Conditions: 150 mM KOAc, 10 mM MgCl2 and 150 mM bicine (pH 8.5), 24 C. Chemical mapping of a 207-nucleotide RNA with 2A3 and DMS. The data come from the RNA Mapping Database (RMDB), library OK3TST. For DMS the reverse transcriptase was MarathonRT. High DMS reactivity at an A or C suggests that its Watson-Crick edge is free.
RNA sequence: GGGAACGACUCGAGUAGAGUCGAAAACAUGGUCGGCAAGAUCGAACUGCCUGCGGGCUUCGACAAGCUGGAAGGCGAGAUCAAGUGGAACUCCUUCUACCGUGAAGCGAUGCUGGCGGCGGCGAACCCUUACCAGUCGCUGGCGCUACAGUGUCGCUCAGAAAAGCUGAUUCGUCAGCUUUUCUGAAAAAGAAACAACAACAACAAC
Reactivity to 2A3 in 0.01 (KOAc 150mM, MgCl2 10mM, bicine 150mM(pH8.5), 24C), signal-to-noise 3, nucleotides 027 to 156: c030a030u060g020g030u060c040g040g030c050a080a100g060a240u030c010g010a060a080c160u130g020c000c010u040g020c190g070g010g010c000u000u020c020g020a030c030a050a120g020c040u050g050g010a020a000g030g020c050g030a050g020a060u070c070a140a110g070u170g110g070a070a030c050u180c050c030u010u030c010u080a060c000c040g060u060g040a040a010g010c000g000a010u010g000c000u000g010g000c020g010g020c000g010g000c000g020a120a130c070c010c000u040u120a140c050c060a040g010u010c000g000c010u020g050g140c000g000c030u070a110c010a030g000u000g000u010c000g000c010
Reactivity to DMS in 0.01 (KOAc 150mM, MgCl2 10mM, bicine 150mM(pH8.5), 24C), signal-to-noise 2, nucleotides 027 to 156: c060a060u000g020g010u000c020g010g000c030a140a210g000a060u010c000g000a060a110c090u010g020c010c020u010g000c090g060g030g010c000u000u010c030g020a130c170a060a220g050c000u020g030g050a070a030g010g000c040g020a140g010a160u000c010a140a160g030u000g030g020a100a170c040u000c020c010u000u000c020u000a030c040c030g030u000g000a120a070g010c010g030a040u000g010c000u000g010g000c010g030g000c010g030g020c020g010a070a160c050c050c050u000u010a150c210c070a050g020u000c000g010c010u000g000g010c030g000c010u000a000c040a030g070u000g020u000c000g030c020